[RMDB]
RNA sequence: GGGAACGACUCGAGUAGAGUCGAAAACACUUUCCAAGUCUCCAUAGCACAGAAGUCUUCUGUCUCCCCAUCCUGACUUUCCCAGCUCAUAGGGACUGUCAAAGGCAGCAGCUCUGGCCGGCUGUGAUGCCUCAUGCCUGUAAUCCCAGUAAUUUGGGGGUUUAUUCCAAUUCGUUGGAAUAAACCCAAAAGAAACAACAACAACAAC
Reactivity to 2A3 in 0.01 (KOAc 150mM, MgCl2 10mM, bicine 150mM(pH8.5), 24C), signal-to-noise 1, nucleotides 027 to 156: c050a020c050u040u130u110c080c070a060a090g020u040c040u030c080c030a100u040a090g050c160a020c020a050g070a190a050g090u060c060u060u000c050u090g100u000c000u040c030c040c010c010a000u060c000c060u040g000a000c010u000u000u010c030c010c010a000g010c040u080c090a090u260a080g000g000g020a040c000u000g030u020c040a050a000a000g010g000c000a010g000c000a020g000c010u000c000u090g030g010c030c030g010g000c010u030g000u050g070a100u060g040c020c000u010c000a020u070g020c000c010u050g030u060a060a060u050c040c000c000a000g000u060a040a160u070u040u040g080g050
Record summary:
Source: RMDB library OK3TST, as collected in RNAgym. Chemical mapping of a 207-nucleotide RNA with 2A3. The reactions ran in a buffer of 150 mM KOAc, 10 mM MgCl2 and 150 mM bicine (pH 8.5), at 24 C. 2A3 adducts were read by reverse transcription with SuperScript II with manganese.